[RMDB]
An RNA of 177 nucleotides, treated with DMS and 2A3 and read out base by base. The data come from the RNA Mapping Database (RMDB), library TTRDEL. Reactivities are given for positions 27 through 126. For 2A3 the reverse transcriptase was SuperScript II with manganese. For 2A3, 5,199 sequencing reads were counted. The RNA was probed in 150 mM KOAc, 10 mM MgCl2 and 150 mM bicine (pH 8.5) at 24 C.

RNA sequence: GGGAACGACUCGAGUAGAGUCGAAAAGAUAUGGAUUUGACAGGGAGCUCUGUCGGAAACGAUUGAGCGAAGAACUGUGGAAUCCUAAGUCAAAAGUCCCUUCGUACCUUCGGGUACGAAGGGACAAGACAGAACUAAUCUUCGGAUUAGUUCUGUCAAAAGAAACAACAACAACAAC
Reactivity to DMS in 0.01 (KOAc 150mM, MgCl2 10mM, bicine 150mM(pH8.5), 24C), signal-to-noise 2, nucleotides 027 to 126: g000a050u000a300u010g000g000a020u000u010u000g010a020c020a010g000g000g000a120g030c010u000c000u000g010u010c000g000g000a100a090a120c000g020a010u000u000g000a000g020c000g000a080a120g020a070a150c000u000g010u000g010g010a030a010u000c000c010u000a020a090g000u000c050a050a080a140a100g000u010c000c000c020u000u000c000g000u000a010c000c000u000u000c220g020g000g010u010a000c020g000a010a010g000g030g010a000c000a000a020
Reactivity to 2A3 in 0.01 (KOAc 150mM, MgCl2 10mM, bicine 150mM(pH8.5), 24C), signal-to-noise 2, nucleotides 027 to 126: g030a010u090a030u140g010g010a000u040u030u040g230a010c000a000g000g050g080a020g010c000u010c000u050g030u000c020g010g020a060a050a020c020g010a010u040u050g010a000g020c050g110a160a000g040a020a010c010u000g000u040g080g030a010a010u000c000c000u010a080a030g030u030c020a030a040a000a130g010u000c000c000c000u000u020c010g030u010a000c000c000u060u130c280g090g000g010u010a000c000g030a000a020g020g000g000a000c000a000a000